[RMDB]
Chemical mapping of a 207-nucleotide RNA with 2A3 and DMS. It was measured as part of the RMDB library RNAMAK. The reactions ran in a buffer of 150 mM KOAc, 10 mM MgCl2 and 150 mM bicine (pH 8.5), at 24 C. 2A3 adducts were read by reverse transcription with SuperScript II with manganese.
RNA sequence: GGGAACGACUCGAGUAGAGUCGAAAAUGGUGCGAUUUCGAUCGCACCAAAAAAAACCUUUGUGUUCGAGUGUAGGGAGCGACCACCCAUUGGGUAAUUCGCGAAGAACUACAUACGAACACUCUGGUAAAAAUCUGCCAUAUUCGUAUGGCAGAAAUCGAUUGAGAUAAUUCGUUAUCUCAAUCGAAAAAGAAACAACAACAACAAC
Reactivity to 2A3 in 0.01 (KOAc 150mM, MgCl2 10mM, bicine 150mM(pH8.5), 24C), signal-to-noise 2, nucleotides 027 to 156: u130g000g000u000g000c000g010a010u100u090u170c240g100a020u010c000g000c010a000c000c000a000a000a000a000a000a000a000a000c000c000u020u000u000g010u000g000u000u000c030g020a160g170u010g010u000a040g000g010g030a070g000c000g010a010c000c080a010c020c010c060a300u220u300g000g000g000u040a070a210u130u040c000g000c010g080a230a030g010a020a000c000u010a000c000a000u040a100c020g000a000a000c000a000c010u000c000u000g000g010u080a100a050a010a000a080u010c000u010g030c000c000a010u020a030u020u070c200g070u050a000u000g010g050c010a000g000a030a010a000
Reactivity to DMS in 0.01 (KOAc 150mM, MgCl2 10mM, bicine 150mM(pH8.5), 24C), signal-to-noise 1, nucleotides 027 to 156: u020g000g010u000g030c000g020a070u000u000u000c240g000a080u000c000g090c000a000c000c020a010a000a000a030a030a040a020a010c000c000u000u000u000g030u000g000u000u010c010g020a300g000u010g000u000a020g000g020g010a230g000c010g010a060c300c090a040c060c010c000a230u020u010g040g050g030u000a040a070u000u000c010g000c020g000a110a130g020a100a080c000u000a040c010a040u010a220c020g000a010a010c020a010c000u020c040u000g010g000u010a010a050a010a060a090u000c000u000g000c000c000a040u000a030u000u040c300g000u000a000u000g000g000c030a000g030a000a060a030